[RMDB]
RNA sequence: GGGAACGACUCGAGUAGAGUCGAAAAUGUUCUUUCCCUUCUUACCCUUACAUACUUCAUCUGGGAGACUUUACAUAUGUGAUAUUUAUGAUCUUGUUAGACUGGUAAUUACAAAGUGCCCUAGGAGGCAAAGUCCUGAUUUCGAUCAGGACUUUGCAAAAGAAACAACAACAACAAC
Reactivity to 2A3 in 0.01 (KOAc 150mM, MgCl2 10mM, bicine 150mM(pH8.5), 24C), signal-to-noise 1, nucleotides 027 to 126: u060g190u080u000c000u000u140u000c000c000c000u000u000c000u000u110a060c000c000c000u140u230a000c000a140u190a160c280u050u080c000a130u000c010u000g000g060g000a000g110a040c000u230u000u090a050c110a000u130a000u170g230u000g000a080u010a000u000u300u000a140u090g060a180u050c030u170u080g140u060u000a060g030a090c150u030g010g000u040a110a080u080u000a010c080a080a090a000g040u010g090c000c000c000u000a080g000g060a000g080